[RMDB]
An RNA of 177 nucleotides, treated with DMS and 2A3 and read out base by base.

RNA sequence: GGGAACGACUCGAGUAGAGUCGAAAACUAAUGGUCAGGCAGGGGGGACAGUGUAUGCAAGAGUAAUUUGGAGUUCAUGCCAGCUCUAGCCAGCUUAAUCAGUGGCUGGAUAAAUUGCAGUACUCUACUUACCACUAAAUUUCGAUUUAGUGGUAAGAAAAGAAACAACAACAACAAC
Reactivity to DMS in 0.01 (KOAc 150mM, MgCl2 10mM, bicine 150mM(pH8.5), 24C), signal-to-noise 9, nucleotides 027 to 126: c060u000a080a080u010g010g010u010c050a060g010g020c050a070g010g000g010g000g010g010a070c090a050g010u000g010u010a050u010g010c060a060a050g010a080g020u020a060a100u010u020u010g010g000a040g000u010u010c080a090u010g010c030c110a080g010c090u000c010u000a040g010c010c020a030g000c030u000u010a080a100u030c270a090g010u010g000g010c000u000g000g000a040u010a020a050a090u010u010g010c030a050g010u000a030c020u000c020u010a170
Reactivity to 2A3 in 0.01 (KOAc 150mM, MgCl2 10mM, bicine 150mM(pH8.5), 24C), signal-to-noise 9, nucleotides 027 to 126: c020u050a090a060u170g050g010u060c050a020g010g040c020a020g000g010g000g010g000g000a010c020a030g030u020g030u070a050u110g030c040a070a040g040a030g110u100a090a180u120u090u130g020g000a020g010u030u060c040a060u140g030c020c030a010g000c020u000c000u020a000g000c000c010a040g050c030u090u150a100a080u230c060a050g050u020g050g000c000u000g000g000a010u060a040a130a030u050u040g000c010a000g030u020a020c000u010c000u020a060
For DMS the reverse transcriptase was MarathonRT.